Source information
Conditions: 150 mM KOAc, 10 mM MgCl2 and 150 mM bicine (pH 8.5), 24 C. This 177-nucleotide RNA was probed chemically with DMS and 2A3. For 2A3 the reverse transcriptase was SuperScript II with manganese. For DMS, 1,012 sequencing reads were counted.

RNA sequence: GGGAACGACUCGAGUAGAGUCGAAAAAGAGCUCGCGAAAUUCCUCCAAGCAGCGGAUAAUUCAGGGUUGUUUGGUGUCCAAUGUGUGCACACGCAAACAUACAUUGAAAGAGAGUGCCUCUGACUCCGCCAGGAGGAUGUUCGCAUCCUCCUGGCGAAAAGAAACAACAACAACAAC
Reactivity to DMS in 0.01 (KOAc 150mM, MgCl2 10mM, bicine 150mM(pH8.5), 24C), signal-to-noise 1, nucleotides 027 to 126: a000g010a020g090c000u050c000g000c010g000a080a090a170u000u000c020c000u000c120c030a040a010g110c190a060g000c080g000g000a010u000a080a120u000u000c000a060g000g020g040u010u020g000u000u000u000g010g020u000g000u000c170c080a050a080u060g070u010g050u020g100c140a160c130a060c070g000c150a050a000a090c000a000u020a150c000a040u000u000g000a000a020a010g020a170g000a070g010u000g010c240c020u000c010u000g000a130c070u040c020
Reactivity to 2A3 in 0.01 (KOAc 150mM, MgCl2 10mM, bicine 150mM(pH8.5), 24C), signal-to-noise 2, nucleotides 027 to 126: a020g090a010g060c080u060c040g060c010g000a010a050a070u090u000c000c000u010c000c000a010a000g000c060a000g000c000g000g130a200u090a150a100u300u080c090a080g160g090g040u030u000g000u010u030u010g000g030u010g000u020c040c020a070a100u070g000u010g010u010g040c100a030c000a000c160g220c030a000a070a020c010a000u080a050c000a020u000u020g050a060a070a010g120a000g000a000g020u000g110c020c000u000c000u010g010a060c020u000c010